RNA sequence: GGGAACGACUCGAGUAGAGUCGAAAAUACAAAAACUGAAGUUCAGGAAUGCGCACGACAGGAAAGUUGGUCGAGAAGUAUAUGCUGAUGAUUACACCAUGGAGCACACAUUUGGUGAAGCGUACACAAAGUGAAUAUACUUCGGUAUAUUCACUUUAAAAGAAACAACAACAACAAC
Reactivity to 2A3 in 0.01 (KOAc 150mM, MgCl2 10mM, bicine 150mM(pH8.5), 24C), signal-to-noise 4, nucleotides 027 to 126: u140a010c050a020a110a020a080a010c060u080g040a080a030g070u060u070c010a010g040g040a090a050u070g020c040g000c020a020c040g050a020c020a040g000g140a080a080a030g080u160u090g060g000u040c030g010a030g020a130a010g050u060a060u010a020u230g040c020u030g020a080u060g020a030u080u160a050c030a010c010c030a040u050g050g010a040g080c040a010c000a000c000a110u070u060u090g000g000u030g010a050a010g040c030g010u080a020c070a010c020
Reactivity to DMS in 0.01 (KOAc 150mM, MgCl2 10mM, bicine 150mM(pH8.5), 24C), signal-to-noise 9, nucleotides 027 to 126: u010a110c120a080a060a080a100a110c080u010g010a060a080g010u000u000c040a050g020g010a080a060u000g010c080g010c070a090c050g010a070c090a070g010g000a060a050a100g010u010u010g020g010u000c060g000a100g010a070a080g020u000a070u000a050u010g010c030u010g010a100u000g010a080u000u000a140c070a050c030c030a040u000g010g000a080g010c060a050c080a050c060a060u000u000u000g010g010u000g010a080a050g000c070g000u010a040c130a050c140